[RMDB]
RNA sequence: GGGAACGACUCGAGUAGAGUCGAAAACAAACCGUGCAAAAUAGUCAAAUGCGGUCUACCGUCAGAAUUUCGGGCGGAAAUACGACAUUAUACAGAAAGCCGGCCGCAAUGUCGUAUAGCACGGAAAGCCUCCGAUUAGGUUCGCCUAAUCGGAGGCAAAAGAAACAACAACAACAAC
Reactivity to 2A3 in 0.01 (KOAc 150mM, MgCl2 10mM, bicine 150mM(pH8.5), 24C), signal-to-noise 1, nucleotides 027 to 126: c010a000a070a000c000c000g000u000g000c000a000a000a080a170u030a060g010u000c020a020a020a020u010g000c000g000g040u000c020u080a160c000c000g000u000c000a050g030a250a160u110u040u080c000g000g000g000c080g000g050a000a160a000u100a020c080g030a040c050a040u090u220a170u140a170c060a090g130a020a000a000g040c000c000g010g000c000c030g070c010a000a000u070g000u000c000g000u000a020u000a000g080c000a000c000g000g000a000a050a000